This 207-nucleotide RNA was probed chemically with 2A3. It was measured as part of the RMDB library OK3TST. The reactions ran in a buffer of 150 mM KOAc, 10 mM MgCl2 and 150 mM bicine (pH 8.5), at 24 C.
RNA sequence: GGGAACGACUCGAGUAGAGUCGAAAACACCACCUCAUCGGCGUCUCAAAAUUCCGCGGUGGAUUCGACCGCUGGUUCAAAAGCAGACACGGCAACAUCAACGACUGGAAAGUCUUCGGCAGCGACUACACCAAAUGCGACCGAAGCUUCCCACUCGCCUACAAAUGGCUUUCGAGCCAUUUGUAGGAAAAGAAACAACAACAACAAC
Reactivity to 2A3 in 0.01 (KOAc 150mM, MgCl2 10mM, bicine 150mM(pH8.5), 24C), signal-to-noise 2, nucleotides 027 to 156: c030a000c010c010a040c040c010u150c070a230u100c030g140g000c140g040u020c050u040c010a140a240a110a110u130u030c040c010g000c030g040g000u050g030g140a230u130u160c040g060a010c000c000g030c130u170g000g020u090u080c030a050a080a000a020g000c050a000g020a040c030a010c090g030g050c010a100a000c010a110u100c040a040a140c060g030a040c060u000g000g010a040a000a010g030u070c000u000u000c010g040g000c080a090g030c050g020a060c070u260a090c180a080c130c020a090a070a020u200g010c000g020a030c000c000g000a000a000g000c000u000u000c010c000c000a030c000u040c030g000